[RMDB]
RNA sequence: GGGAACGACUCGAGUAGAGUCGAAAACUGGGACAUGCUCUGUGGCUGGGCCUGUCGGCGACUUGUCUGCGUGAGCGCCGGGGCCGAGGAGAACGCUGAGCAGACUGCGCCCGGAGAAGCCCUGCUGCAGCAUCGAAGGACGCGGGUUCGAUUCCCGGAAUCAUGAAAACUUCGGUUUUCAUGAUUCAAAAGAAACAACAACAACAAC
Reactivity to 2A3 in 0.01 (KOAc 150mM, MgCl2 10mM, bicine 150mM(pH8.5), 24C), signal-to-noise 2, nucleotides 027 to 156: c050u050g030g040g040a020c020a040u040g010c010u020c030u100g010u000g020g000c020u050g030g010g000c010c010u120g250u180c020g000g020c010g080a260c120u100u200g020u030c030u030g000c040g050u190g130a020g000c000g000c020c020g030g020g060g030c050c070g040a080g020g040a080g020a090a000c000g000c020u050g030a020g000c020a010g010a010c010u000g010c010g010c030c050c020g020g010a060g020a040a010g010c000c000c010u010g000c000u010g010c000a030g040c000a020u030c020g040a060a030g080g000a020c040g000c000g050g000g010u110u100c020g030a240u030u030c000c000c000g010